Overview
Chemical mapping of a 207-nucleotide RNA with 2A3. High 2A3 reactivity points to a flexible backbone, as in loops and unpaired stretches. The data come from the RNA Mapping Database (RMDB), library RNAMAK. For 2A3 the reverse transcriptase was SuperScript II with manganese.

RNA sequence: GGGAACGACUCGAGUAGAGUCGAAAAUCCUAAGUCUUCGGCCACUUGGAUUUAUUUAGGGAGGAAUAUCGGAAACGAUAUUCCGAAGAACUAAAUUGUCAGUGGCGAAGAUAUGGAAAAAGGCAAGGUAUUGUCCUUCGGGACAAUACCUUGCCAAGGAGUACUCUAACUUCGGUUAGAGUACUCCAAAAGAAACAACAACAACAAC
Reactivity to 2A3 in 0.01 (KOAc 150mM, MgCl2 10mM, bicine 150mM(pH8.5), 24C), signal-to-noise 1, nucleotides 027 to 156: u040c010c000u010a090a050g020u000c010u000u010c020g300g090c000c000a050c010u120u220g150g000a070u300u240u050a010u000u030u000a170g020g010g010a010g010g000a000a000u000a000u000c000g010g050a120a100a030c000g000a000u000a010u000u000c000c000g050a010a000g000a000a000c010u000a000a000a020u020u040g010u030c000a000g000u000g000g010c000g000a000a000g000a000u010a110u030g050g070a050a040a010a190a150g030g000c000a000a010g000g010u000a010u010u010g010u000c010c020u000u130c300g000g000g010a000c000a010a000u000a000c030c010u000u000g000c000c000a000a010